[RMDB]
RNA sequence: GGGAACGACUCGAGUAGAGUCGAAAAGAUAUGGAGUUACCAGUGUAUUUACUCCUCUUUUGACGCUUACAUAUCGGAAACGAUAUGAAGCGAUAAGAGGGUAAAUACACUGGUAACUCCUAAGUCAUCCUCAAUAGUACUUCGGUACUAUUGAGGAAAAAGAAACAACAACAACAAC
Reactivity to DMS in 0.01 (KOAc 150mM, MgCl2 10mM, bicine 150mM(pH8.5), 24C), signal-to-noise 2, nucleotides 027 to 126: g010a040u000a300u020g020g000a020g000u000u000a000c000c000a000g000u000g030u010a000u000u000u010a000c000u010c000c000u000c000u000u000u000u000g010a300c100g010c000u000u000a210c010a000u010a000u000c000g020g000a180a110a260c010g000a010u000a000u000g000a000a000g020c000g040a090u000a010a000g010a040g020g000g010u000a000a010a010u000a000c000a000c000u020g000g000u000a000a000c000u000c020c000u000a000a050g020u010c020a180
This 177-nucleotide RNA was probed chemically with DMS. For DMS, 2,438 sequencing reads were counted. For DMS the reverse transcriptase was MarathonRT. The RNA was probed in 150 mM KOAc, 10 mM MgCl2 and 150 mM bicine (pH 8.5) at 24 C.